RNA sequence: GGGAACGACUCGAGUAGAGUCGAAAAGCGAAAUAGAUUUAAUAGCACUGUUUGCUUGUUGGUUUACGGAGAUGAUAAUCUCAUUUCUGUAUCACCGUCCAUAGCCUCUUGGUUUACUGGGGAGGCCACUAGAUCAGGACUUCGGUCCUGAUCUAGUAAAAGAAACAACAACAACAAC
Reactivity to DMS in 0.01 (KOAc 150mM, MgCl2 10mM, bicine 150mM(pH8.5), 24C), signal-to-noise 2, nucleotides 027 to 126: g000c000g000a050a050a020u000a040g000a160u010u000u040a120a100u010a130g020c210a130c010u010g030u000u010u010g000c010u000u000g010u000u000g010g050u020u020u000a010c010g030g000a000g000a020u000g000a020u010a080a110u020c300u000c010a010u000u000u000c000u020g010u000a010u000c250a020c020c010g000u000c000c010a120u010a130g000c010c000u010c010u000u020g000g020u000u000u010a040c210u060g030g010g010g000a040g000g010c020c190
Reactivity to 2A3 in 0.01 (KOAc 150mM, MgCl2 10mM, bicine 150mM(pH8.5), 24C), signal-to-noise 1, nucleotides 027 to 126: g030c020g040a000a030a040u090a090g120a130u040u240u300a210a180u130a160g170c090a010c070u020g080u060u040u000g000c000u010u030g040u060u210g030g000u050u020u000a000c040g010g000a040g000a010u030g040a020u070a140a220u000c010u000c120a010u010u000u050c010u040g020u000a010u100c100a050c010c020g010u010c020c040a080u060a040g010c000c000u020c040u040u070g180g000u260u280u270a160c180u110g100g000g050g000a000g010g080c030c020
This 177-nucleotide RNA was probed chemically with DMS and 2A3. The 2A3 profile rests on 599 reads. 2A3 adducts were read by reverse transcription with SuperScript II with manganese.